The record gives the reactivity of an RNA of 177 nucleotides to DMS.
Values cover nucleotides 27 to 126.
Source: RMDB library OK2TST, as collected in RNAgym.
[RMDB]
RNA sequence: GGGAACGACUCGAGUAGAGUCGAAAAACUUCAGUACUUCAUCUCAACCCACGGUGCGCGUAAAGGUUUGGCGGAUACCGCAUUGAAAACUGCGAACUCUGGUUAUCUGACCCGUCGUUUAGUUGACCUAAGUGUCGUGGUUCGCCACGACACUUAGAAAAGAAACAACAACAACAAC
Reactivity to DMS in 0.01 (KOAc 150mM, MgCl2 10mM, bicine 150mM(pH8.5), 24C), signal-to-noise 1, nucleotides 027 to 126: a060c060u000u000c120a100g010u040a040c070u010u030c090a090u000c000u000c110a070a090c060c000c030a210c130g060g000u000g020c060g000c130g020u000a030a070a180g010g000u000u000u000g030g010c060g000g010a090u030a050c070c010g000c050a040u010u000g010a030a120a050a090c090u020g000c000g000a080a080c070u000c080u000g010g000u000u000a080u000c030u000g000a090c040c010c110g010u000c110g000u000u000u040a050g010u000u030g020a140c080